[RMDB]
The record gives the reactivity of an RNA of 177 nucleotides to 2A3 and DMS. The reactions ran in a buffer of 150 mM KOAc, 10 mM MgCl2 and 150 mM bicine (pH 8.5), at 24 C. For DMS, 2,289 sequencing reads were counted. 2A3 adducts were read by reverse transcription with SuperScript II with manganese. For 2A3, 2,418 sequencing reads were counted.
RNA sequence: GGGAACGACUCGAGUAGAGUCGAAAAGGGAGAUCCGAGCAGAGGCAUAGCGAACUGCGCACGGUGAAGCCUUGAGGGAAGGCCGUAGGACCCGGGUUCGAUUCCCGGCGGCUCCACCGAAGGGCCACCACCUGCAUGGAUUCGUCCAUGCAGGUGGAAAAGAAACAACAACAACAAC
Reactivity to 2A3 in 0.01 (KOAc 150mM, MgCl2 10mM, bicine 150mM(pH8.5), 24C), signal-to-noise 3, nucleotides 027 to 126: g090g010g000a060g010a040u020c010c010g010a010g000c020a000g040a090g090g020c080a110u180a060g040c030g070a060a030c040u050g010c070g000c010a050c120g050g000u050g020a090a000g040c010c000u000u020g020a050g030g010g010a070a050g020g000c000c000g030u110a070g050g180a100c020c010c000g010g010g010u000u090c020g030a040u070u040c020c000c000g000g010c010g000g030c010u050c050c070a040c000c000g000a010a010g000g000g000c000c010a020
Reactivity to DMS in 0.01 (KOAc 150mM, MgCl2 10mM, bicine 150mM(pH8.5), 24C), signal-to-noise 3, nucleotides 027 to 126: g000g010g010a230g000a080u020c010c010g010a140g030c000a000g000a070g000g020c030a140u040a120g000c120g060a060a130c000u000g000c010g000c100a080c020g000g000u000g030a140a090g000c000c000u000u040g020a300g040g000g020a300a130g000g000c000c000g040u050a170g030g000a080c160c010c000g030g000g000u000u030c230g040a300u020u000c000c030c000g020g000c060g000g000c000u010c060c140a300c040c010g000a150a020g000g000g000c000c030a150